[RMDB]
RNA sequence: GGGAACGACUCGAGUAGAGUCGAAAAGAUGCGGUCAGCGUGUUUGCGCUGCCGACGAUGCCGCCGCUGCACAUCGCGCUGUUGCGCGAGCUGUCGCGCUGGAUCGACGUGCGCAUCUACGCGCUCAUGAGGGAGUCGUCUUCGGACGACUCCCUCAAAAAGAAACAACAACAACAAC
Reactivity to DMS in 0.01 (KOAc 150mM, MgCl2 10mM, bicine 150mM(pH8.5), 24C), signal-to-noise 1, nucleotides 027 to 126: g000a040u000g000c030g000g000u000c040a020g080c030g040u000g010u000u010u020g020c000g030c010u020g010c100c020g000a070c080g000a050u000g050c010c040g020c300c020g040c020u000g020c010a180c190a300u000c000g020c020g020c010u020g000u000u020g040c000g000c010g000a010g000c280u000g000u000c300g050c090g000c050u000g000g010a080u000c000g000a170c010g000u000g010c010g000c030a010u000c040u000a050c160g010c070g000c020u050c080a090
Reactivity to 2A3 in 0.01 (KOAc 150mM, MgCl2 10mM, bicine 150mM(pH8.5), 24C), signal-to-noise 1, nucleotides 027 to 126: g110a010u060g010c070g000g080u140c070a020g050c000g040u080g060u050u120u210g000c000g000c000u000g000c000c030g000a000c000g000a000u150g300c000c010g000c000c000g000c020u000g000c000a040c010a120u010c000g000c000g000c000u160g140u300u300g000c030g000c010g000a010g020c050u040g040u080c040g000c030g000c040u090g000g010a000u020c020g000a030c000g040u090g000c000g000c010a010u030c020u000a030c040g000c000g020c010u070c020a030